[RMDB]
RNA sequence: GGGAACGACUCGAGUAGAGUCGAAAACGCUGGGUGAUUCUCUAUGUUAGGAACUACCUGAAGCGCGCACGGGCCUAACUCUAUAGAUCUGAAUCACCUGUGCUGAAGCGCGCACGGCAACCGAAAGGUGCGAAAGAGCAGUCUUCGGACUGCUCAACGACGUCAGUAGUUUCGACUACUGACGUCGAAAAGAAACAACAACAACAAC
Reactivity to 2A3 in 0.01 (KOAc 150mM, MgCl2 10mM, bicine 150mM(pH8.5), 24C), signal-to-noise 2, nucleotides 027 to 156: c060g010c040u030g000g010g000u010g030a000u020u020c080u040c100u200a110u230g010u000u020a010g000g010a150a040c070u040a110c240c010u040g080a200a060g020c020g000c010g000c010a000c020g000g010g000c000c000u040a010a000c000u020c070u220a220u120a260g100a210u110c170u280g010a010a000u000c000a000c000c000u010g030u010g020c080u140g060a060a060g000c020g020c000g020c000a000c000g050g030c020a070a140c040c000g030a150a000a000g020g000u010g000c020g070a150a160a080g010a000g000c000a010g000u000c010u050u140c230g100g000a010c000u020g000c000u000c000a000a010